[RMDB]
RNA sequence: GGGAACGACUCGAGUAGAGUCGAAAAGUACCCUUGUUCGCAAGGGUACAAAGACAGACUUCACUGUCAUAAAGAACGUAACAUCUCAGUUACAAUAAGAGAAAAGCACCUACUUCGGUAGGUGCAACCCCCUUAUAUCGUUCGCGAUAUAAGGGGGAAAAGAAACAACAACAACAAC
Reactivity to DMS in 0.01 (KOAc 150mM, MgCl2 10mM, bicine 150mM(pH8.5), 24C), signal-to-noise 3, nucleotides 027 to 126: g000u000a000c000c000c000u000u000g010u000u000c210g040c010a020a000g000g010g010u000a000c010a030a040a130g010a040c000a020g000a260c160u000u010c150a130c000u000g020u010c000a090u010a090a090a090g010a080a090c250g010u000a010a010c010a070u000c060u010c150a140g000u000u000a000c040a170a070u000a070a090g000a110g010a070a070a150a160g020c000a000c000c000u000a010c000u000u000c240g020g000u000a000g010g000u000g000c000a000a050
Reactivity to 2A3 in 0.01 (KOAc 150mM, MgCl2 10mM, bicine 150mM(pH8.5), 24C), signal-to-noise 3, nucleotides 027 to 126: g010u000a000c020c000c000u010u020g050u010u030c170g000c120a000a000g020g000g000u000a000c000a000a000a000g000a000c020a020g010a030c030u090u050c140a020c090u030g010u000c020a010u260a030a230a050g110a080a040c150g020u030a010a000c010a080u100c080u030c160a070g000u000u030a010c030a050a080u270a170a060g130a000g070a020a080a020a040g000c000a000c000c000u020a010c010u010u060c150g050g010u010a000g000g010u000g000c010a000a000